[RMDB]
Annotation:
Chemical mapping of a 177-nucleotide RNA with DMS and 2A3. Reactivities are given for positions 27 through 126. Source: RMDB library M2PK50, as collected in RNAgym.

RNA sequence: GGGAACGACUCGAGUAGAGUCGAAAAGUGCACGACUUCGGUCGUGCACAAAUAAAGGCAGUCGAGUGCGUACGGCACAGUCAUACGCUGACGCGACGACAAAAAGUAACGUCUUCGGACGUUACAAUCGAUAUCAAGCGUUCGCGCUUGAUAUCGAAAAAGAAACAACAACAACAAC
Reactivity to DMS in 0.01 (KOAc 150mM, MgCl2 10mM, bicine 150mM(pH8.5), 24C), signal-to-noise 3, nucleotides 027 to 126: g020u000g000c010a010c000g000a020c000u010u020c160g040g000u000c010g000u000g020c000a000c010a000a040a080u000a040a130a110g010g010c140a110g000u000c030g030a070g010u000g000c000g010u010a110c130g010g000c070a130c170a140g000u010c150a090u000a050c110g000c000u000g000a050c030g010c020g000a110c030g000a050c100a090a050a080a150a070g010u000a000a000c000g000u000c000u010u000c200g030g000a010c000g000u000u020a000c000a030a030
Reactivity to 2A3 in 0.01 (KOAc 150mM, MgCl2 10mM, bicine 150mM(pH8.5), 24C), signal-to-noise 2, nucleotides 027 to 126: g000u000g000c010a000c000g000a000c030u020u090c270g010g000u000c020g000u000g010c040a000c000a000a000a000u010a000a010a030g150g010c070a040g040u010c010g050a050g080u100g050c010g000u040a170c030g030g000c040a000c030a160g110u130c010a050u070a170c090g000c040u040g080a010c000g000c010g020a020c010g000a010c050a000a090a020a010a010g000u000a000a000c020g010u000c000u020u030c200g080g000a000c000g010u000u010a000c000a000a020